RNA sequence: GGGAACGACUCGAGUAGAGUCGAAAAAGCCUGGAAACGAACGGUAGACCCUUAGAUUUUAAUUUAGUUUAAUUUUUAGUUUAGUUUAAGUUAGUUUAGAGUAGGUGUAAAGAUGCCAGUGCCGGGGAAAACCAUGUUCUUUCGAGAACAUGGUUUUAAAAGAAACAACAACAACAAC
Reactivity to DMS in 0.01 (KOAc 150mM, MgCl2 10mM, bicine 150mM(pH8.5), 24C), signal-to-noise 2, nucleotides 027 to 126: a140g010c040c010u010g010g000a080a050a080c060g010a070a070c080g000g000u020a070g010a100c020c110c040u010u010a020g000a060u000u010u010u010a000a050u010u010u010a160g000u010u000u000a030a020u000u000u020u020u020a080g000u020u010u010a050g000u010u020u000a040a070g020u000u010a080g000u000u000u000a050g010a140g010u010a080g010g020u000g020u010a070a070a090g010a130u020g010c020c020a060g000u000g010c030c010g000g000g000g010
Notes: Structure probing data (DMS) for a 177-nucleotide construct. Reactivities are given for positions 27 through 126. It was measured as part of the RMDB library RFM100.